[RMDB]
RNA sequence: GGGAACGACUCGAGUAGAGUCGAAAAAGAUAUGGAGCUAGUAAGACAGCGUUAUUGUACGUAACAUCACGUCGGAAACGACGUGUGGUACAAAGUCAUUGCGCAAUGACGCUAGCUCCUAAGUCAACCAAUAUCUACGCUUCGGCGUAGAUAUUGGAAAAGAAACAACAACAACAAC
Reactivity to 2A3 in 0.01 (KOAc 150mM, MgCl2 10mM, bicine 150mM(pH8.5), 24C), signal-to-noise 3, nucleotides 027 to 126: a000g050a010u050a010u100g000g000a010g000c010u000a000g020u060a150a150g120a170c080a030g070c050g030u190u240a170u070u090g100u160a090c100g020u040a060a010c000a050u300c020a010c000g010u000c000g010g050a060a020a020c010g000a010c000g000u010g010u000g010g010u000a010c030a030a140a040g080u070c030a090u090u170g010c000g000c040a250a300u180g020a010c070g000c030u000a000g030c000u000c000c000u010a020a000g010u000c020a050a040
Reactivity to DMS in 0.01 (KOAc 150mM, MgCl2 10mM, bicine 150mM(pH8.5), 24C), signal-to-noise 2, nucleotides 027 to 126: a130g000a010u000a300u000g000g020a020g000c000u010a030g030u040a090a170g000a170c210a140g000c010g040u000u000a030u000u000g020u010a070c050g000u010a030a090c040a010u020c020a000c010g000u000c000g010g010a090a120a130c000g020a020c010g020u010g020u000g000g000u000a010c010a090a100a180g000u000c070a040u020u020g000c020g020c020a080a170u020g000a210c300g000c010u000a000g000c000u000c000c000u000a000a070g000u000c030a100a300